Chemical mapping of a 177-nucleotide RNA with 2A3 and DMS. The DMS profile rests on 3,432 reads.
[RMDB]
RNA sequence: GGGAACGACUCGAGUAGAGUCGAAAAGCGUGCGACCACUGAUAUAAAAAGCGGACAACCGGAAAACGGCAAAGAAAUGUCAGAAAGAGAACGAGCAAGACCGCUGAUGUCUGACAGUAGCACGCGAGGGUAAAUCAUACUUCGGUAUGAUUUACCCAAAAGAAACAACAACAACAAC
Reactivity to 2A3 in 0.01 (KOAc 150mM, MgCl2 10mM, bicine 150mM(pH8.5), 24C), signal-to-noise 5, nucleotides 027 to 126: g000c000g000u000g010c030g030a010c000c020a020c030u020g000a000u000a010u070a110a270a050a040a010g010c010g000g010a050c040a070a060c040c020g010g050a020a080a040a150c010g010g000c020a000a130a080g120a050a190a020u090g000u030c050a030g130a100a140a000g200a030g060a120a040c020g020a020g090c020a080a020g020a060c020c000g020c040u040g030a020u050g010u000c000u000g010a040c000a050g020u030a000g000c010a000c000g030c000g020a110
Reactivity to DMS in 0.01 (KOAc 150mM, MgCl2 10mM, bicine 150mM(pH8.5), 24C), signal-to-noise 3, nucleotides 027 to 126: g040c000g000u020g000c000g000a170c130c070a180c050u000g010a050u000a040u020a030a110a140a130a020g000c000g000g000a160c110a170a190c070c040g000g000a050a020a080a060c150g000g000c030a010a120a150g000a040a130a070u000g000u010c000a060g010a050a120a100g050a190g010a070a090c030g030a140g000c140a100a090g020a070c010c020g020c010u000g000a080u000g000u000c040u000g000a150c150a080g030u050a160g000c000a000c020g000c000g000a110